[RMDB]
RNA sequence: GGGAACGACUCGAGUAGAGUCGAAAAGCAGAAAGGAUAUUCAAGGAGGCUGAGAAGUUCUUUGUGUCUAUCAGCCUUCCUUACAUGACUCAAGGAUUCUGGGACAACUCCAUGCUGACUGAGCCAGCAUGGUUUUUCACUUCGGUGAAAAACCAUGAAAAGAAACAACAACAACAAC
Reactivity to 2A3 in 0.01 (KOAc 150mM, MgCl2 10mM, bicine 150mM(pH8.5), 24C), signal-to-noise 5, nucleotides 027 to 126: g040c030a010g110a100a120a040g090g030a090u120a080u200u180c070a020a010g010g000a010g010g000c010u020g010a010g030a120a100g070u210u090c080u120u280u280g230u100g010u060c010u010a040u000c000a000g000c000c000u040u070c010c000u000u010a020c010a050u090g060a020c010u020c090a060a080g070g040a100u140u030c030u080g050g010g020a050c030a060a030c060u020c020c010a060u140g010c010u010g020a090c020u040g020a010g080c030c010a010g020
Reactivity to DMS in 0.01 (KOAc 150mM, MgCl2 10mM, bicine 150mM(pH8.5), 24C), signal-to-noise 6, nucleotides 027 to 126: g020c050a070g000a060a080a090g020g000a050u030a050u000u010c130a040a000g000g010a050g000g020c010u000g000a020g010a100a080g010u030u010c030u010u040u050g020u030g010u000c010u010a150u010c000a000g010c000c000u020u030c010c000u010u010a130c220a100u010g010a100c090u010c060a080a120g020g000a100u010u020c010u010g010g000g010a060c120a040a110c090u010c000c010a020u000g010c000u000g000a070c060u010g000a110g010c040c020a020g020